RNA sequence: GGGAACGACUCGAGUAGAGUCGAAAAAUCUGCAGAAAGCAGUGGAGAAUCGCAGGUAGUCGGGAAAAUUGAGGAAUCUGAGGAUUCGCAAGAAUCUCAAGAAUCUCAAGAAUCCACAGAAAGCUCUAUGGCUAAUGGAUUUCGAUCCAUUAGCCAUAAAAGAAACAACAACAACAAC
Reactivity to DMS in 0.01 (KOAc 150mM, MgCl2 10mM, bicine 150mM(pH8.5), 24C), signal-to-noise 1, nucleotides 027 to 126: a060u000c010u020g060c000a200g030a090a120a030g020c060a030g000u000g000g010a060g000a100a090u000c090g040c070a030g040g020u000a010g010u000c100g010g000g020a050a020a110a270u010u020g000a090g010g000a140a120u030c030u000g040a190g000g010a000u000u000c000g040c300a140a080g000a010a050u000c010u010c060a120a040g000a000a000u010c010u030c010a020a060g010a030a170u000c000c010a060c090a080g000a110a110a100g000c090u000c030u000
Structure probing data (DMS) for a 177-nucleotide construct. Values cover nucleotides 27 to 126. It was measured as part of the RMDB library OK2TST.